This 207-nucleotide RNA was probed chemically with DMS and 2A3. The reactions ran in a buffer of 150 mM KOAc, 10 mM MgCl2 and 150 mM bicine (pH 8.5), at 24 C. Reactivities are given for positions 27 through 156. DMS (dimethyl sulfate) methylates the pairing face of unpaired adenines and cytosines.
RNA sequence: GGGAACGACUCGAGUAGAGUCGAAAAAUUCGGGCAUGUCUACAAAGUGUUUUCUGGGGAAAGACAUUUCGCCCUCAAACUCUUUGACGUUGGCAUCACCGAAAAGGGAAAUGGAGACUCAAUGGGUAUCGGAGGGCUGCUUGACUUUCACUUUGGCCUCCGUUACAAGAUUCGUCUUGUAACGGAGAAAAGAAACAACAACAACAAC
Reactivity to DMS in 0.01 (KOAc 150mM, MgCl2 10mM, bicine 150mM(pH8.5), 24C), signal-to-noise 2, nucleotides 027 to 156: a200u000u000c010g020g030g030c080a040u030g000u010c020u010a130c070a020a040a060g010u000g030u000u000u000u000c040u010g000g020g040g010a110a050a050g020a130c270a170u000u000u000c050g000c040c000c040u000c010a050a070a050c030u000c030u000u000u000g020a110c130g010u010u000g030g010c010a050u000c070a230c000c000g000a040a070a120a110g000g000g030a040a050a160u020g020g000a230g000a070c030u010c050a050a140u000g000g000g060u000a110u000c120g050g020a080g000g010g010c000u000g020c050u000u000g010a210c110u010u000u000c030a080c080u000u000u000g020g000c120
Reactivity to 2A3 in 0.01 (KOAc 150mM, MgCl2 10mM, bicine 150mM(pH8.5), 24C), signal-to-noise 5, nucleotides 027 to 156: a000u070u050c040g010g010g000c060a040u050g040u050c040u060a060c040a040a080a020g040u040g040u060u060u050u110c080u090g020g010g020g010a030a080a010g050a040c040a040u080u110u070c140g060c010c000c000u010c000a040a060a000c000u000c010u020u020u020g070a080c120g040u020u030g040g080c000a010u020c040a050c030c000g050a120a060a050a100g030g000g020a060a090a030u080g020g020a050g000a030c010u010c070a030a070u050g000g000g030u080a130u240c130g100g010a020g000g020g020c030u030g020c020u030u030g020a050c000u050u110u060c090a090c050u030u050u070g040g010c000